[RMDB]
RNA sequence: GGGAACGACUCGAGUAGAGUCGAAAAUAGAAGAAGAGGCUAGGUGGUAUUCCGGAGUGGGAUACUUGGUAAUAUGUAACGCUAAUUGCAUAAGAUUGUAGGACGGAAUUUACAGUCUUGGUUUUUAAAAACUUCUCGUAGUUCGCUACGAGAAGAAGAAUUACCCCUAGUUCGCUAGGGGUAAUUCAAAAGAAACAACAACAACAAC
Reactivity to 2A3 in 0.01 (KOAc 150mM, MgCl2 10mM, bicine 150mM(pH8.5), 24C), signal-to-noise 3, nucleotides 027 to 156: u100a010g040a060a000g030a040a000g010a000g050g030c050u050a020g060g020u050g010g000u090a080u050u070c040c050g050g030a050g060u110g040g040g010a030u020a130c010u020u070g020g030u070a050a060u060a080u160g050u050a070a010c050g000c120u070a110a040u140u050g000c000a020u020a120a030g000a040u020u040g020u030a020g000g020a020c070g020g060a020a040u090u070u020a030c010a020g000u000c000u000u050g030g020u020u050u010u110u190a040a100a010a060a040c000u000u000c000u000c000g000u000a010g020u040u060c150g020c150u000a000c000g000a000g000a000a000g000a000a000
Reactivity to DMS in 0.01 (KOAc 150mM, MgCl2 10mM, bicine 150mM(pH8.5), 24C), signal-to-noise 1, nucleotides 027 to 156: u000a090g010a090a110g010a080a110g000a090g010g020c040u000a010g040g040u010g010g030u000a050u010u000c040c060g000g000a120g030u010g020g000g000a070u000a020c020u000u030g040g040u000a040a120u000a050u010g050u000a040a120c040g000c070u010a080a160u020u020g010c000a130u030a030a020g000a000u000u010g020u000a020g000g000a190c030g010g040a130a250u000u000u000a040c010a040g030u010c010u000u000g030g020u000u000u000u000u070a030a170a050a210a190c010u000u010c010u000c010g010u000a010g000u000u010c300g000c010u000a000c000g000a010g000a010a020g000a020a060

Notes
Structure probing data (2A3 and DMS) for a 207-nucleotide construct. The RNA was probed in 150 mM KOAc, 10 mM MgCl2 and 150 mM bicine (pH 8.5) at 24 C. It was measured as part of the RMDB library M2RFPK. For 2A3, 2,547 sequencing reads were counted. DMS adducts were read by reverse transcription with MarathonRT. The DMS profile rests on 1,837 reads.